[RMDB]
RNA sequence: GGGAACGACUCGAGUAGAGUCGAAAAUCUAUGUAUUAUGAGAUAGCUACUUCUAUGGCUAGGAUAUAUGUUGUACAAGACCGGCUUUUCUUCUACUUCUUGCACAACCUGAGGUUAUUGAGGCUAUACUAAGAAUGGACUUCGGUCCAUUCUUAGUAAAAGAAACAACAACAACAAC
Reactivity to 2A3 in 0.01 (KOAc 150mM, MgCl2 10mM, bicine 150mM(pH8.5), 24C), signal-to-noise 2, nucleotides 027 to 126: u040c040u050a150u160g190u020a060u210u110a080u300g090a040g040a200u040a030g000c000u000a070c050u100u120c020u000a080u060g050g050c050u020a080g020g030a040u040a010u030a020u190g080u040u060g010u000a060c020a050a000g040a100c010c000g110g000c030u120u060u080u020c010u040u050c000u030a040c010u000u030c030u060u000g010c040a020c000a070a120c000c030u060g040a090g040g010u040u020a010u000u130g020a030g010g010c010u030a030u010
Reactivity to DMS in 0.01 (KOAc 150mM, MgCl2 10mM, bicine 150mM(pH8.5), 24C), signal-to-noise 2, nucleotides 027 to 126: u000c000u030a020u060g010u030a060u070u020a050u010g020a120g010a060u000a060g010c030u010a060c110u000u010c100u030a090u030g000g000c000u000a160g000g020a120u000a040u010a030u010g020u010u000g030u000a050c110a050a050g000a030c190c040g010g010c110u010u000u000u000c010u010u000c040u000a070c060u000u010c000u000u000g000c120a050c090a040a060c020c040u000g010a100g010g030u000u000a040u000u000g010a020g010g050c020u000a140u000